[RMDB]
RNA sequence: GGGAACGACUCGAGUAGAGUCGAAAAGACACGCUUUGCAGAUGACCUCCUCGUUGGUGGGUGUCGGUAAUGUUGUCAGUCACAGGCAACAGUUAACGAUCUGCCUAAAUAAAAAGAGAAGAACAAAGCAGCUAUUACUGUUCGCAGUAAUAGCUGCAAAAGAAACAACAACAACAAC
Reactivity to 2A3 in 0.01 (KOAc 150mM, MgCl2 10mM, bicine 150mM(pH8.5), 24C), signal-to-noise 3, nucleotides 027 to 126: g070a010c040a020c050g050c010u060u130u130g000c060a030g020a090u070g050a130c000c000u000c000c010u040c000g110u120u220g020g040u040g000g040g000u060g060u040c000g040g000u050a030a030u000g010u020u010g040u040c020a020g120u070c040a010c010a100g010g000c000a020a010c010a050g050u040u000a050a000c000g000a010u000c000u060g000c000c010u170a190a220a100u250a080a130a000a030a000g090a020g020a210a000g020a060a040c070a040a140a000
Reactivity to DMS in 0.01 (KOAc 150mM, MgCl2 10mM, bicine 150mM(pH8.5), 24C), signal-to-noise 2, nucleotides 027 to 126: g000a030c160a050c270g110c000u020u050u040g030c000a000g080a060u040g000a040c090c030u000c020c040u000c010g070u000u060g000g020u000g000g000g100u010g050u020c020g020g000u000a050a030u000g010u000u050g000u000c000a090g000u070c270a090c100a000g000g000c000a000a000c000a030g000u040u030a060a000c040g030a040u010c000u000g020c010c070u050a100a040a150u080a000a050a130a030a090g160a120g020a110a130g000a100a150c300a080a080a150